Overview: An RNA of 177 nucleotides, treated with 2A3 and DMS and read out base by base. For 2A3, 1,889 sequencing reads were counted. Conditions: 150 mM KOAc, 10 mM MgCl2 and 150 mM bicine (pH 8.5), 24 C.

[RMDB]
RNA sequence: GGGAACGACUCGAGUAGAGUCGAAAAGCACGUCCGGUCAGGCCCGUGCGAACACUUGAGCUCCGGGUAGGCCGCUCUUGUGGAUUAGGACGUUCUACGUCCGGCUUGGCCCGUAGUUCGUCCGAAAGGCUACGAUGACGUUCGCGUCGUCGUAGCCAAAAGAAACAACAACAACAAC
Reactivity to 2A3 in 0.01 (KOAc 150mM, MgCl2 10mM, bicine 150mM(pH8.5), 24C), signal-to-noise 1, nucleotides 027 to 126: g030c000a000c020g020u000c000c020g000g050u010c020a010g090g000c000c030c050g000u000g030c000g020a090a020c050a020c050u030u100g050a030g000c020u100c180c010g010g070g190u140a080g140g010c030c020g040c000u030c000u020u040g010u020g020g020a090u020u160a080g000g000a000c000g000u000u000c020u030a020c010g040u010c100c010g030g030c050u080u090g090g010c030c010c000g010u000a000g000u020u000c000g000u000c000c000g000a000a020a020
Reactivity to DMS in 0.01 (KOAc 150mM, MgCl2 10mM, bicine 150mM(pH8.5), 24C), signal-to-noise 2, nucleotides 027 to 126: g000c000a000c010g000u000c130c030g010g040u000c010a000g000g030c130c070c000g070u000g020c040g000a060a030c090a080c110u010u000g030a180g000c010u010c100c020g010g060g000u080a110g020g000c060c110g000c020u000c000u010u020g010u010g000g000a090u030u030a040g020g000a030c000g000u000u000c000u000a000c000g000u060c130c070g000g020c130u060u030g010g000c070c010c020g000u000a000g010u000u000c020g000u000c010c020g000a020a040a080

Source: RMDB library OK1LIB, as collected in RNAgym. Values cover nucleotides 27 to 126.